[RMDB]
RNA sequence: GGGAACGACUCGAGUAGAGUCGAAAAGAUAUGGAUCCACUGGUGAAGGUCGAAGAACUCGGAAACGAGGGAGACCCACUUGGAUCCUAAGUCAAAAGUGAUCUUGCUCUUCGGAGCAAGAUCACAAGUAUCAAUGUGAGUUCGCUCACAUUGAUACAAAAGAAACAACAACAACAAC
Reactivity to DMS in 0.01 (KOAc 150mM, MgCl2 10mM, bicine 150mM(pH8.5), 24C), signal-to-noise 4, nucleotides 027 to 126: g000a080u000a300u000g010g000a000u010c000c010a050c300u000g010g000u010g010a150a090g010g010u010c000g000a080a190g040a090a170c000u000c010g000g000a100a110a120c030g000a010g000g000g000a100g000a010c000c000c000a010c000u000u000g010g000a000u000c000c000u000a010a070g000u000c040a070a050a090a190g010u000g000a010u000c000u000u000g010c000u000c000u000u010c190g010g000a010g000c000a000a000g020a000u000c010a010c000a000a060
Reactivity to 2A3 in 0.01 (KOAc 150mM, MgCl2 10mM, bicine 150mM(pH8.5), 24C), signal-to-noise 4, nucleotides 027 to 126: g030a020u100a020u160g000g000a000u030c030c040a040c270u210g040g010u060g130a300a170g020g000u010c020g120a280a050g020a080a050c000u010c010g020g020a070a060a040c020g000a010g000g010g000a020g010a010c000c010c000a000c010u030u030g020g010a000u000c000c000u010a100a020g040u030c030a060a040a060a100g000u000g000a010u000c000u000u010g010c010u020c000u040u130c300g040g000a000g010c000a000a000g000a000u000c000a000c000a000a000

Source information: An RNA of 177 nucleotides, treated with DMS and 2A3 and read out base by base. The 2A3 profile rests on 8,942 reads. In probing experiments dimethyl sulfate is read out at A N1 and C N3, which are open when not base-paired. Reactivities are given for positions 27 through 126. Conditions: 150 mM KOAc, 10 mM MgCl2 and 150 mM bicine (pH 8.5), 24 C.